This 177-nucleotide RNA was probed chemically with 2A3 and DMS. Values are in units of 0.01, from 0 to 300, in steps of 10. For DMS the reverse transcriptase was MarathonRT. The 2A3 profile rests on 2,911 reads. It was measured as part of the RMDB library M2PK50.

RNA sequence: GGGAACGACUCGAGUAGAGUCGAAAACUUGGGGCCUUCGGGCCCCAAGAAAGAAAAAGGCAAGGACCAGCCAAAUAAAGGUCCAAAAAGAUCGAAUGAUCAAAACGUAACCGUUCGCGGUUACGAAGUAUACUAAUAAGUUCGCUUAUUAGUAUACAAAAGAAACAACAACAACAAC
Reactivity to 2A3 in 0.01 (KOAc 150mM, MgCl2 10mM, bicine 150mM(pH8.5), 24C), signal-to-noise 2, nucleotides 027 to 126: c000u000u010g000g070g050g020c020c000u050u060c220g140g000g010c000c060c000c000a000a000g000a010a010a000g000a010a040a000a010a020g010g000c060a030a070g000g000a010c000c000a000g010c010c010a030a030a000u200a020a050a030g000g000u030c000c000a060a040a000a010a000g020a010u030c020g070a210a200u280g010a010u030c030a010a070a000a010c000g000u000a000a000c020c000g000u020u060c250g020c020g100g020u000u000a000c000g000a020a000
Reactivity to DMS in 0.01 (KOAc 150mM, MgCl2 10mM, bicine 150mM(pH8.5), 24C), signal-to-noise 2, nucleotides 027 to 126: c000u010u010g010g000g000g020c000c010u010u010c210g070g020g010c000c000c000c000a000a010g010a070a110a110g010a050a130a100a130a080g000g020c010a040a110g040g020a010c000c010a100g000c020c000a060a090a150u000a010a060a180g020g030u000c000c000a010a020a070a090a070g000a010u000c010g000a180a090u010g010a020u000c010a080a060a070a150c010g000u010a010a020c000c010g010u010u000c160g000c000g000g010u000u000a000c000g000a030a060